[RMDB]
RNA sequence: GGGAACGACUCGAGUAGAGUCGAAAAUAGUUUAAAUCUAAUCUAAACUUUAUAAACGGCACUUCCUGCGUGUCCAUGCCCGCGGGCCUGGUCUUGUCAUAGUGCUGACAUUUGUAGUUCCUUGACUAACACAGGAACUUUUCGAAGUUCCUGUGUUAAAAGAAACAACAACAACAAC
Reactivity to 2A3 in 0.01 (KOAc 150mM, MgCl2 10mM, bicine 150mM(pH8.5), 24C), signal-to-noise 3, nucleotides 027 to 126: u150a020g010u010u020u020a150a150a080u090c120u180a050a000u110c000u020a010a050a020c020u110u130u030a160u130a090a060a020c010g020g000c000a000c000u030u040c000c000u000g000c010g010u030g000u000c000c000a000u020g010c000c000c030g020c180g020g000g000c000c010u010g000g000u000c010u040u160g000u000c010a030u200a200g000u000g000c020u000g020a000c000a160u030u040u140g100u050a070g030u000u030c000c000u050u090g020a040c070u010